[RMDB]
This 177-nucleotide RNA was probed chemically with DMS. The reactions ran in a buffer of 150 mM KOAc, 10 mM MgCl2 and 150 mM bicine (pH 8.5), at 24 C. Reactivities are given for positions 27 through 126. The DMS profile rests on 1,070 reads.
RNA sequence: GGGAACGACUCGAGUAGAGUCGAAAAGCGAUGUCAGCUCACUGCAACCUCCGCCUUCCGGGUUCAAGCGAUUCUCCUGCCUCCACCUCCCAAGUAGCUGGAACUACAGGUGUGUGCCACCACGCCCUGAGCGUGUUUACUUCGGUAAACACGCUCAAAAAGAAACAACAACAACAAC
Reactivity to DMS in 0.01 (KOAc 150mM, MgCl2 10mM, bicine 150mM(pH8.5), 24C), signal-to-noise 1, nucleotides 027 to 126: g000c130g010a090u000g000u000c050a050g010c040u000c080a060c030u000g010c050a100a110c010c000u000c050c030g020c060c030u000u040c040c080g000g010g010u010u010c090a020a160g000c070g000a040u040u000c030u010c010c060u010g000c040c010u000c000c070a010c050c050u000c040c020c030a020a080g000u020a030g010c050u020g020g020a050a100c040u000a030c050a050g000g030u000g000u010g000u000g020c070c040a040c050c010a000c040g010c010c010c060